[RMDB]
RNA sequence: GGGAACGACUCGAGUAGAGUCGAAAACGGCAUGAUACCACCGUUAUCGGGUCAACAGAGUAGUUGCAAAUGACGACAAUGCUCAGGGUUAUGCUCUCGCUGCCUAAUGGCGGUGCGGGAAACCCACAAAAGAUAUUGAUCUUCGGAUCAAUAUCAACUCUAUCCAGGACUUCGGUCCUGGAUAGAGAAAAGAAACAACAACAACAAC
Reactivity to 2A3 in 0.01 (KOAc 150mM, MgCl2 10mM, bicine 150mM(pH8.5), 24C), signal-to-noise 4, nucleotides 027 to 156: c010g020g010c020a020u160g020a020u050a060c010c010a000c000c010g170u120u070a020u070c060g000g000g020u030c020a000a040c070a040g040a010g010u090a010g020u040u040g030c050a050a190a220u260g070a090c050g000a020c020a040a090u060g000c010u040c090a040g030g000g000u030u050a100u300g070c010u010c000u000c010g000c000u010g000c000c000u190a270a120u090g000g000c020g020g020u020g000c020g020g000g000a020a010a000c020c060c020a040c030a010a070a000a020g000a000u000a000u000u000g000a010u000c010u020u090c200g100g010a010u000c010a000a000u000a000u000c000a000a030
Conditions: 150 mM KOAc, 10 mM MgCl2 and 150 mM bicine (pH 8.5), 24 C. Chemical mapping of a 207-nucleotide RNA with 2A3. It was measured as part of the RMDB library M2RFPK. Reactivities are given for positions 27 through 156. For 2A3 the reverse transcriptase was SuperScript II with manganese.